Structure probing data (2A3 and DMS) for a 177-nucleotide construct.
[RMDB]
RNA sequence: GGGAACGACUCGAGUAGAGUCGAAAAGAUAUGGAUAUGUGAGCUUGGACCCUGCGGGUCGGAAACGACCUCAGGCUAGCUUUACAUAUCCUAAGUCAAAAGUACCACAUGUUCGCAUGUGGUACAACUAGGAGAUGGUGUUCGCACCAUCUCCUAGAAAAGAAACAACAACAACAAC
Reactivity to 2A3 in 0.01 (KOAc 150mM, MgCl2 10mM, bicine 150mM(pH8.5), 24C), signal-to-noise 1, nucleotides 027 to 126: g090a020u140a050u130g010g000a010u000a000u000g010u020g000a010g020c050u160u250g170g120a290c080c000c010u000g000c270g050g000g000u010c030g000g010a120a050a020c000g010a010c000c010u000c000a000g010g060c030u080a040g030c000u050u110u220a000c010a000u010a000u030c000c000u000a070a010g050u040c000a000a080a120a070g010u000a010c020c060a030c000a000u040g000u100u130c300g000c240a010u000g000u010g080g000u000a010c020a000a000
Reactivity to DMS in 0.01 (KOAc 150mM, MgCl2 10mM, bicine 150mM(pH8.5), 24C), signal-to-noise 1, nucleotides 027 to 126: g010a060u000a300u000g000g000a000u000a010u000g040u010g030a010g000c010u000u000g050g010a080c300c010c010u000g000c290g000g000g000u010c000g000g000a100a060a130c000g000a020c000c000u000c010a020g000g030c090u000a010g000c000u000u000u030a040c000a010u000a000u000c000c010u000a010a150g000u000c010a050a080a100a240g000u000a010c010c010a000c040a010u000g010u010u010c170g050c000a000u000g010u000g000g030u000a000c000a010a170
Reactivities are given for positions 27 through 126. The RNA was probed in 150 mM KOAc, 10 mM MgCl2 and 150 mM bicine (pH 8.5) at 24 C. The 2A3 profile rests on 1,867 reads. For 2A3 the reverse transcriptase was SuperScript II with manganese. For DMS the reverse transcriptase was MarathonRT. It was measured as part of the RMDB library TTRDES.